[RMDB]
RNA sequence: GGGAACGACUCGAGUAGAGUCGAAAAUGAAAUCAUUGAAUAUUACGUUUCUGGCGAUAAAUUAGAAGUUGUAGACAUACCAGUAGGAUACACACAUAAUAUUGAAAAUUUAGGCGACACAGAUAUGCUGUAAGUUUUGUUUCGACAAAACUUACAGAAAAGAAACAACAACAACAAC
Reactivity to 2A3 in 0.01 (KOAc 150mM, MgCl2 10mM, bicine 150mM(pH8.5), 24C), signal-to-noise 3, nucleotides 027 to 126: u200g020a020a000a060u210c070a080u020u180g050a060a050u210a060u150u080a100c060g000u040u060u000c000u040g010g050c040g010a090u070a070a120a090u060u060a070g120a260a040g060u030u050g010u020a030g050a050c000a110u120a050c030c020a080g120u100a050g110g060a020u020a080c010a000c010a010c020a020u070a220a040u140a220u120u150g110a080a060a000a000u060u080u040a080g050g050c010g050a030c090a000c000a110g020a020u030a050u250g040
Reactivity to DMS in 0.01 (KOAc 150mM, MgCl2 10mM, bicine 150mM(pH8.5), 24C), signal-to-noise 2, nucleotides 027 to 126: u050g000a110a090a050u010c010a010u000u010g000a100a070u010a050u020u000a070c080g000u040u000u000c000u000g000g000c010g000a070u010a060a080a110u000u010a100g010a080a150g020u040u000g000u000a020g010a050c030a080u020a140c090c080a060g020u020a100g050g000a050u000a050c060a020c130a060c030a050u000a030a070u000a060u010u000g000a040a090a040a040u020u010u000a080g000g050c010g000a010c090a030c020a030g000a080u000a040u000g010

Chemical mapping of a 177-nucleotide RNA with 2A3 and DMS. The data come from the RNA Mapping Database (RMDB), library OK1LIB. Conditions: 150 mM KOAc, 10 mM MgCl2 and 150 mM bicine (pH 8.5), 24 C. The DMS profile rests on 2,397 reads.